About this RNA
An RNA of 207 nucleotides, treated with 2A3 and read out base by base. The reactions ran in a buffer of 150 mM KOAc, 10 mM MgCl2 and 150 mM bicine (pH 8.5), at 24 C. It was measured as part of the RMDB library OK3TST.

RNA sequence: GGGAACGACUCGAGUAGAGUCGAAAAUUUACCCACCCGCCCUGCUCAAACUGAGCAGUGGCUUCUGUCCUGGAGAGGUGGGUGAUUGAGCCACCUUCCCCUCUAAGCUCAGACCCCCGACGCCUCUGUGGAGGCAAGGAUCACACUGCAUGUUAGAGCUCGUAUACUCAUUCGUGAGUAUACGAGCAAAAGAAACAACAACAACAAC
Reactivity to 2A3 in 0.01 (KOAc 150mM, MgCl2 10mM, bicine 150mM(pH8.5), 24C), signal-to-noise 1, nucleotides 027 to 156: u030u000u160a170c000c000c000a030c000c000c040g000c000c000c000u000g040c030u000c000a300a300a300c250u160g000a000g000c030a000g010u070g140g000c040u030u000c000u000g040u010c000c000u010g000g070a000g000a000g070g000u000g020g020g000u000g010a000u000u170g020a060g070c030c000a040c000c010u050u130c000c000c090c010u030c000u040a000a040g060c010u080c020a000g010a000c000c000c040c000c000g000a070c080g000c000c000u030c000u060g170u270g190g000a000g000g010c000a000a040g050g000a000u080c000a000c010a010c120u070g000c030a010u010g020u130u030a000g000a000